[RMDB]
RNA sequence: GGGAACGACUCGAGUAGAGUCGAAAAGAAGGACAUAACGCGAAGAAGCAGAGAGAAGACUGGAGUGACGCGAUUCACUAGACGUCAACGACGGCAAGAGAGAGCCGAAGGAGACGAUCCUUAGGAGGGUGGAUCGUAUGUUCGCAUACGAUCCACCAAAAGAAACAACAACAACAAC
Reactivity to 2A3 in 0.01 (KOAc 150mM, MgCl2 10mM, bicine 150mM(pH8.5), 24C), signal-to-noise 2, nucleotides 027 to 126: g060a000a040g120g000a000c030a000u160a000a100c070g000c000g060a130a160g120a200a000g040c030a020g000a010g000a000g070a180a030g020a000c060u010g050g020a040g030u170g000a040c030g020c060g110a030u190u150c010a000c000u010a060g000a040c020g000u010c000a000a020c050g000a000c020g000g020c040a220a030g020a000g000a000g000a050g300c000c010g000a000a000g000g010a000g000a000c000g070a080u070c090c000u130u230a030g000g010a040g070
Reactivity to DMS in 0.01 (KOAc 150mM, MgCl2 10mM, bicine 150mM(pH8.5), 24C), signal-to-noise 1, nucleotides 027 to 126: g000a300a000g000g000a000c000a030u050a040a170c300g010c020g060a050a020g000a010a120g000c000a020g060a170g000a050g040a000a060g000a020c120u000g000g000a080g000u000g000a050c020g000c030g010a120u000u000c110a090c100u000a010g000a000c010g000u000c000a000a170c000g010a300c000g000g000c050a060a050g000a190g000a040g000a060g020c060c000g110a130a270g000g030a300g000a120c030g000a000u020c020c040u010u000a210g000g040a170g020

Record summary
The record gives the reactivity of an RNA of 177 nucleotides to 2A3 and DMS. For 2A3, 1,065 sequencing reads were counted. For 2A3 the reverse transcriptase was SuperScript II with manganese.